[RMDB]
RNA sequence: GGGAACGACUCGAGUAGAGUCGAAAAUCAGCAACGCGCUAGAGCUGGCGGAUUCGCUCGGCCCGGUGCGGGUCGUCGUCAACUGCGCCGGCACCGGCAACGCGAUUCGCGUACUGAGUCGCGACGGAGCAAUGCAGCCAUUCGUGGCUGCAUUGCUAAAAGAAACAACAACAACAAC
Reactivity to DMS in 0.01 (KOAc 150mM, MgCl2 10mM, bicine 150mM(pH8.5), 24C), signal-to-noise 1, nucleotides 027 to 126: u040c010a070g020c040a140a110c040g000c020g060c040u000a110g010a060g000c040u000g010g020c000g030g000a040u000u000c070g010c060u000c210g030g000c170c020c010g000g000u000g000c020g000g010g020u010c040g000u010c090g020u000c200a110a160c090u020g020c030g000c000c010g010g010c030a010c010c000g020g000c020a050a090c140g000c000g020a040u000u000c000g000c060g010u000a110c160u000g000a030g040u000c010g070c030g000a150c190g000g000
Reactivity to 2A3 in 0.01 (KOAc 150mM, MgCl2 10mM, bicine 150mM(pH8.5), 24C), signal-to-noise 1, nucleotides 027 to 126: u080c020a010g070c010a090a120c020g040c020g000c030u040a010g000a040g190c100u150g080g030c000g000g040a020u130u100c040g000c020u000c000g040g000c000c000c000g030g020u030g000c040g060g050g060u120c050g090u040c030g020u080c060a190a170c120u100g000c030g010c040c030g070g000c000a000c000c010g000g090c030a010a000c040g010c000g010a010u030u000c020g000c000g020u090a080c030u120g060a060g060u130c010g030c020g010a060c050g030g020